[RMDB]
An RNA of 177 nucleotides, treated with DMS and 2A3 and read out base by base. High 2A3 reactivity points to a flexible backbone, as in loops and unpaired stretches. The DMS profile rests on 14,534 reads. For DMS the reverse transcriptase was MarathonRT. For 2A3 the reverse transcriptase was SuperScript II with manganese. The RNA was probed in 150 mM KOAc, 10 mM MgCl2 and 150 mM bicine (pH 8.5) at 24 C. It was measured as part of the RMDB library OK2TST.
RNA sequence: GGGAACGACUCGAGUAGAGUCGAAAACUGAAGAAGACGGUUUAGAAGCUUAUAGUAUAAUUGCUAAAAAUGCUAAACAAUUCUUAAAACCGAACGGUAAGAUUAUACUCGAAAUAGGCUUUAGUCAUCAUCAUCCCGGAUUCGUCCGGGGUGGUGAAAAAGAAACAACAACAACAAC
Reactivity to DMS in 0.01 (KOAc 150mM, MgCl2 10mM, bicine 150mM(pH8.5), 24C), signal-to-noise 9, nucleotides 027 to 126: c030u000g010a130a120g020a130a120g010a110c080g010g000u000u000u010a110g000a030a020g010c040u000u000a070u000a030g010u000a020u000a040a050u000u010g000c100u010a030a060a070a090a060u010g000c050u010a060a080a100c150a090a100u000u000c030u000u010a050a050a090a070c050c040g000a080a080c170g000g010u000a040a150g000a020u000u000a030u000a010c000u000c300g000a030a070a090u000a040g000g010c020u000u000u000a060g010u000c080a120
Reactivity to 2A3 in 0.01 (KOAc 150mM, MgCl2 10mM, bicine 150mM(pH8.5), 24C), signal-to-noise 6, nucleotides 027 to 126: c010u050g030a050a020g050a070a020g060a040c030g020g040u050u090u140a050g010a050a000g000c010u050u060a030u020a110g010u010a010u010a080a100u070u050g000c010u060a050a070a060a050a070u100g000c010u000a030a040a030c020a050a080u080u030c020u060u170a080a080a030a040c010c000g040a070a030c080g010g010u030a050a020g000a020u020u030a010u020a020c020u030c060g050a080a060a130u050a030g030g000c010u040u050u090a040g040u060c030a040